[RMDB]
RNA sequence: GGGAACGACUCGAGUAGAGUCGAAAAAUAAGAGUCUUACCAUAGUUGACAUUCCACAGAGUUUGACUUUUUCAUAUGAUGGGUUACGUGGCGCAAUACGUAAAGCUAAAGAUUAUGGUUUUACUGUGAACUCGGGUGUUCGCACCCGAGAAAAGAAACAACAACAACAAC
Reactivity to 2A3 in 0.01 (KOAc 150mM, MgCl2 10mM, bicine 150mM(pH8.5), 24C), signal-to-noise 3, nucleotides 027 to 129: a000u210a010a080g030a000g040u000c000u020u070a030c000c020a010u020a000g020u020u110g080a030c080a110u190u070c030c000a030c100a200g090a010g030u070u080u070g060a010c000u090u040u010u050u040c050a050u040a050u240g040a050u020g050g000g010u000u030a050c030g000u080g000g030c050g020c180a020a000u040a010c060g010u050a060a030a000g060c030u000a030a000a100g090a060u130u080a010u070g020g000u000u010u060u000a060c010u030g100u040g120a060a030
Reactivity to DMS in 0.01 (KOAc 150mM, MgCl2 10mM, bicine 150mM(pH8.5), 24C), signal-to-noise 1, nucleotides 027 to 129: a130u120a000a000g020a040g000u060c050u060u010a130c030c020a130u020a070g010u000u030g020a210c110a080u000u000c000c000a090c110a050g040a110g030u050u040u030g030a070c060u030u020u040u000u010c030a030u050a090u030g020a110u000g000g030g000u080u010a090c050g010u010g000g000c000g040c120a080a120u040a040c040g050u040a000a000a000g040c000u030a000a120a080g040a060u060u010a060u040g000g020u000u000u000u000a030c040u030g000u040g000a090a150
The record gives the reactivity of an RNA of 170 nucleotides to 2A3 and DMS. It was measured as part of the RMDB library 15KLIB. For 2A3 the reverse transcriptase was SuperScript II with manganese.